[RMDB]
RNA sequence: GGGAACGACUCGAGUAGAGUCGAAAAUUCUGCCGUUCCGGCAGAAGUCAAUACCUGCAUACACGUAACGCAUUAGCUCCAGUAGCACCAGGUAGCACCGUAGCACUAGAUAGUACAUAAUACAGUAUAUAAUGAUGACGUAUUACAUGUACAGGUACGAAGAUUAUAGGUUCGCCUAUGAUCUUCGAAAAGAAACAACAACAACAAC
Reactivity to 2A3 in 0.01 (KOAc 150mM, MgCl2 10mM, bicine 150mM(pH8.5), 24C), signal-to-noise 4, nucleotides 027 to 156: u010u000c000u010g010c000c000g130u220u130c080c070g000g010c000a010g010a010a000g050u060c060a020a060u020a090c000c000u000g020c050a060u040a040c030a000c070g050u050a060a010c030g000c050a030u030u080a030g010c010u020c000c040a050g020u080a030g040c030a040c050c040a030g060g000u020a030g020c040a040c040c010g040u040a020g020c010a010c030u010a010g030a070u070a030g070u020a020c020a040u100a060a030u070a080c060a040g060u010a020u020a010u020a140a180u140g060a030u080g040a020c010g000u020a030u040u030a030c040a020u010g000u000a010c000a030g040g010u010a040
Reactivity to DMS in 0.01 (KOAc 150mM, MgCl2 10mM, bicine 150mM(pH8.5), 24C), signal-to-noise 4, nucleotides 027 to 156: u000u000c000u000g010c000c000g010u000u000c140c140g020g050c050a010g010a030a030g020u000c070a090a200u000a090c030c000u010g010c040a170u000a060c030a040c030g010u000a060a060c060g000c030a080u000u000a060g050c050u010c010c030a070g000u000a100g010c020a080c050c030a070g000g000u000a110g040c040a260c020c040g010u010a100g030c060a090c040u000a080g000a140u000a080g010u000a040c030a050u000a030a080u000a070c030a100g030u000a300u000a120u010a110a120u010g010a110u000g010a050c070g020u000a050u000u000a030c020a070u000g000u010a020c120a060g020g000u010a140

This 207-nucleotide RNA was probed chemically with 2A3 and DMS. The data come from the RNA Mapping Database (RMDB), library OK3TST. DMS adducts were read by reverse transcription with MarathonRT. Values cover nucleotides 27 to 156.